[RMDB]
RNA sequence: GGGAACGACUCGAGUAGAGUCGAAAAGAUAUGGACUGAACUACAGAGCGAAAGGACGAAGAACUCGGAAACGAGGGAGUCCUGAGCUCUGCAGUCCUAAGUCAAAAGUUUAGGUUCGCCUAAACAAGUUCACAAGAAGGUUCGCCUUCUUGUGAACAAAAGAAACAACAACAACAAC
Reactivity to 2A3 in 0.01 (KOAc 150mM, MgCl2 10mM, bicine 150mM(pH8.5), 24C), signal-to-noise 2, nucleotides 027 to 126: g040a050u060a020u110g010g030a000c020u010g010a110a020c050u190a070c280a000g000a000g000c020g090a240a030a010g020g010a020c030g150a300a090g010a100a040c000u000c000g000g010a090a040a040c020g000a010g000g000g000a000g000u000c000c000u000g010a000g000c010u000c000u010g000c010a000g000u000c000c000u010a080a010g070u000c020a050a000a070a110g000u020u010u010a010g010g020u000u020c300g080c070c000u020a010a010a000c000a000a040
Reactivity to DMS in 0.01 (KOAc 150mM, MgCl2 10mM, bicine 150mM(pH8.5), 24C), signal-to-noise 3, nucleotides 027 to 126: g010a070u000a300u000g000g010a040c010u010g010a040a010c060u040a300c020a030g010a030g000c010g010a120a100a010g000g000a010c000g000a100a180g030a140a260c010u000c000g000g000a100a090a160c000g010a020g020g000g000a090g030u010c000c000u000g010a300g020c000u000c010u000g000c000a020g000u000c000c000u000a020a090g000u000c010a080a040a120a120g010u000u000u000a000g020g020u000u010c200g010c020c010u000a010a000a000c020a120a120
Record summary:
Structure probing data (2A3 and DMS) for a 177-nucleotide construct. It was measured as part of the RMDB library TTRDEL. For 2A3, 2,864 sequencing reads were counted. The DMS profile rests on 2,042 reads.